[RMDB]
RNA sequence: GGGAACGACUCGAGUAGAGUCGAAAAGAUAUGGACUUUGUCACAUGCAGUUAGAGCGAUAAGCUGUGUAUCGGAAACGAUACCAGCUUUUGACGCUCCUAACUGCAUGUGACAAAGUCCUAAGUCAGUCGGUAAUAAUGUUCGCAUUAUUACCGACAAAAGAAACAACAACAACAAC
Reactivity to DMS in 0.01 (KOAc 150mM, MgCl2 10mM, bicine 150mM(pH8.5), 24C), signal-to-noise 1, nucleotides 027 to 126: g000a070u010a300u000g010g000a000c000u000u000u000g030u000c020a000c000a000u000g000c010a020g010u010u000a010g000a040g070c020g010a120u000a000a000g000c000u000g000u010g050u000a000u010c000g010g010a150a190a260c020g010a020u000a000c010c010a000g050c000u010u030u000u010g010a170c050g070c010u000c210c080u000a000a010c000u000g000c000a000u000g000u000g030a000c000a000a010a000g000u000c000c000u000a010a040g000u000c000a180